Structure probing data (DMS and 2A3) for a 207-nucleotide construct.
Reactivities are given for positions 27 through 156.
It was measured as part of the RMDB library VIROID.
For 2A3 the reverse transcriptase was SuperScript II with manganese.
[RMDB]
RNA sequence: GGGAACGACUCGAGUAGAGUCGAAAAUCCGUGAAGAGCGUCAGCGGACGGCCUCUGAGACGAGCGAUGGACAGUAGAGCUCGUCUCUACCAGUCGCGUGCUGACUCUCACGCCCACCCGCACGGCUGCUCCGAGAGAGGAGAGCUCUCUGCCGCUACUUACUUUAGAACUUCGGUUCUAAAGUAAGAAAAGAAACAACAACAACAAC
Reactivity to DMS in 0.01 (KOAc 150mM, MgCl2 10mM, bicine 150mM(pH8.5), 24C), signal-to-noise 1, nucleotides 027 to 156: u000c070c070g010u040g010a200a240g050a000g000c000g050u000c040a120g010c020g000g040a070c050g000g020c010c030u000c050u020g010a080g040a080c030g000a060g070c020g000a240u010g060g020a110c030a130g010u000a060g020a300g030c030u010c210g000u000c020u030c000u000a010c020c040a100g000u020c000g000c030g000u010g050c070u000g020a040c130u000c000u020c000a120c090g020c020c030c000a220c060c010c000g000c030a130c000g030g000c020u010g020c000u000c020c000g000a200g000a050g010a050g020g020a140g020a100g030c020u020c020u000c020u010g010c000c050g020c040u010a120
Reactivity to 2A3 in 0.01 (KOAc 150mM, MgCl2 10mM, bicine 150mM(pH8.5), 24C), signal-to-noise 6, nucleotides 027 to 156: u030c020c000g000u040g020a200a170g010a040g040c090g080u010c010a010g010c030g070g050a160c020g010g010c010c030u090c140u050g010a000g020a010c010g010a010g000c020g060a140u210g080g120a150c110a120g200u210a050g040a020g030c010u010c050g020u000c000u000c000u000a010c000c030a030g010u010c010g000c050g110u200g000c010u000g010a020c000u000c000u000c000a000c020g020c010c020c000a050c020c030c000g020c020a030c050g020g000c010u140g050c020u090c040c030g040a060g010a010g010a030g180g010a060g010a020g040c010u010c010u010c020u050g030c010c020g050c030u040a060